[RMDB]
Notes: An RNA of 177 nucleotides, treated with DMS and 2A3 and read out base by base. Values cover nucleotides 27 to 126. For DMS, 2,039 sequencing reads were counted. The RNA was probed in 150 mM KOAc, 10 mM MgCl2 and 150 mM bicine (pH 8.5) at 24 C. It was measured as part of the RMDB library OK1LIB.
RNA sequence: GGGAACGACUCGAGUAGAGUCGAAAAGGGCUAAUGAUGGUCACCACCUCCGGAAUGGCGCUGUCCUCGCCGGCGAACACGCGACUCAGCUGGUCGAGCAGCAGCUUGCGUGGCUCCACAUUGGUGGGACCAUUUUACGCUUCGGCGUAAAAUGGUCAAAAGAAACAACAACAACAAC
Reactivity to DMS in 0.01 (KOAc 150mM, MgCl2 10mM, bicine 150mM(pH8.5), 24C), signal-to-noise 2, nucleotides 027 to 126: g010g020g010c140u010a000a080u000g000a090u000g010g010u000c040a190c000c030a000c020c000u000c220c130g020g000a220a040u010g000g000c030g010c040u000g020u000c280c050u000c000g030c050c000g000g000c040g000a080a150c080a020c000g000c070g020a170c080u000c170a150g000c000u000g000g050u080c060g060a050g000c080a010g000c000a000g000c100u000u000g040c090g030u010g030g000c030u020c080c000a050c070a190u050u010g000g040u000g040g000
Reactivity to 2A3 in 0.01 (KOAc 150mM, MgCl2 10mM, bicine 150mM(pH8.5), 24C), signal-to-noise 4, nucleotides 027 to 126: g070g000g000c030u040a070a020u120g130a050u060g050g030u050c070a060c190c000a020c000c010u110c040c090g110g100a100a070u150g100g000c000g000c030u020g040u150c040c020u030c020g020c000c000g000g040c010g010a090a040c050a030c100g070c080g120a090c040u040c080a050g010c000u010g010g090u220c130g020a020g030c000a000g000c010a010g010c010u020u080g000c050g020u010g030g000c010u000c000c000a040c010a070u050u150g050g000u010g000g000